[RMDB]
RNA sequence: GGGAACGACUCGAGUAGAGUCGAAAAAGGUUCGCUGUGGUGCAACUCUUAUUAGUAACUAAUCCAAAGCAAGUAUAGGAGAACAGGUUUUUAACUAUUUUUAGGCAGAUAAACAAUAGUAUUUGACAAAAUCGAUUGUCGUUCGCGACAAUCGAAACAGUAAUCGUAUCUUCGGAUACGAUUACUGAAAAGAAACAACAACAACAAC
Reactivity to 2A3 in 0.01 (KOAc 150mM, MgCl2 10mM, bicine 150mM(pH8.5), 24C), signal-to-noise 5, nucleotides 027 to 156: a000g060g010u060u060c040g000c020u030g020u030g040g040u030g030c020a030a070c010u010c020u080u110a120u080u090a080g070u040a060a080c050u040a090a060u030c040c020a090a030a040g020c030a060a020g020u040a070u070a070g020g020a030g010a040a020c040a060g030g010u050u000u020u020u020a030a010c010u010a040u030u060u010u040u020a010g040g040c040a010g010a090u030a030a040a010c030a040a030u020a030g040u040a130u090u110u170g080a050c050a020a100a020a100u020c000g000a000u000u000g010u000c020g000u040u060c140g000c010g080a000c000a000a000u000c000g000a020a000a000
Reactivity to DMS in 0.01 (KOAc 150mM, MgCl2 10mM, bicine 150mM(pH8.5), 24C), signal-to-noise 2, nucleotides 027 to 156: a060g020g030u010u000c140g010c030u000g000u000g030g020u010g040c030a070a130c030u010c030u010u000a070u000u000a130g010u000a050a100c040u000a070a100u000c120c060a080a090a140g020c000a030a100g030u000a090u000a100g010g000a040g000a060a080c090a090g030g010u000u000u000u000u000a030a090c020u000a050u010u000u000u000u020a080g000g010c040a040g010a100u000a010a040a080c060a060a040u010a060g020u000a140u000u010u020g000a130c090a060a050a050a130u000c010g030a010u010u000g000u000c000g000u000u010c230g030c020g000a020c000a000a010u000c000g010a000a020a040